Background
Chemical mapping of a 177-nucleotide RNA with DMS and 2A3.
RNA sequence: GGGAACGACUCGAGUAGAGUCGAAAACAGCCUCGGUGUGGUCGUUGAGACGGUGUCGCACUAUGAUCCGAUUUACCUAAUGCUUCUCUGGUCAAGUCGGCAAUGCCGGCGAUUGAGCCGAUGAUACAUGGGGAUUUACGUUCGCGUAAAUCCCCAUAAAAGAAACAACAACAACAAC
Reactivity to DMS in 0.01 (KOAc 150mM, MgCl2 10mM, bicine 150mM(pH8.5), 24C), signal-to-noise 1, nucleotides 027 to 126: c170a250g030c010c000u000c070g010g010u000g000u050g000g020u020c030g000u050u000g000a110g000a150c080g000g050u030g010u010c000g030c060a020c080u000a100u020g000a070u000c030c030g010a120u000u000u050a090c020c060u000a040a200u000g070c020u060u000c070u000c010u030g000g000u000c040a040a150g020u000c030g000g000c000a080a130u000g040c070c020g030g000c000g040a010u100u020g000a300g000c110c050g000a050u030g010a080u020a040c050
Reactivity to 2A3 in 0.01 (KOAc 150mM, MgCl2 10mM, bicine 150mM(pH8.5), 24C), signal-to-noise 3, nucleotides 027 to 126: c020a040g050c010c000u050c020g050g000u170g060u200g020g040u000c020g000u040u030g100a130g010a230c070g020g010u030g000u000c010g050c020a010c000u080a130u300g030a010u040c020c060g010a020u050u100u050a140c070c070u140a210a060u230g030c010u100u060c000u000c000u020g010g000u000c000a000a040g010u040c000g000g040c000a040a000u050g020c010c000g000g000c000g060a080u000u060g070a010g010c000c000g070a070u120g000a000u050a090c070

For 2A3 the reverse transcriptase was SuperScript II with manganese.
High 2A3 reactivity points to a flexible backbone, as in loops and unpaired stretches.